[RMDB]
RNA sequence: GGGAACGACUCGAGUAGAGUCGAAAAGAAAAGGAUAUACAGUCAGCAAAUGAGCACAUGAAAAGAUGUUCAACAUCAUUAGCCAUUGGGAAAAUGCAAAUUGAGAUCACAAUGUGAUAUCACUAUACAUCUAUCAGAAUGGCCAAAAUAAAAACCACUGGACUAAUCCAUUCGUGGAUUAGUCCAGAAAAGAAACAACAACAACAAC
Reactivity to 2A3 in 0.01 (KOAc 150mM, MgCl2 10mM, bicine 150mM(pH8.5), 24C), signal-to-noise 2, nucleotides 027 to 156: g040a020a150a010a010g040g030a050u060a000u030a150c040a010g080u090c020a000g020c030a040a110a190u110g010a000g010c020a010c010a000u070g090a110a130a010a020g070a010u060g030u140u170c000a020a100c010a090u140c010a060u030u120a000g010c000c000a000u010u050g000g030g080a050a190a000a000u000g000c030a060a060a000u050u080g010a030g010a010u020c010a010c030a130a270u220g000u020g010a000u030a030u050c040a010c030u030a020u040a110c000a020u000c060u130a100u030c020a010g120a190a020u040g060g000c050c040a050a120a070a040u280a040a090a160a000a010c060c300a040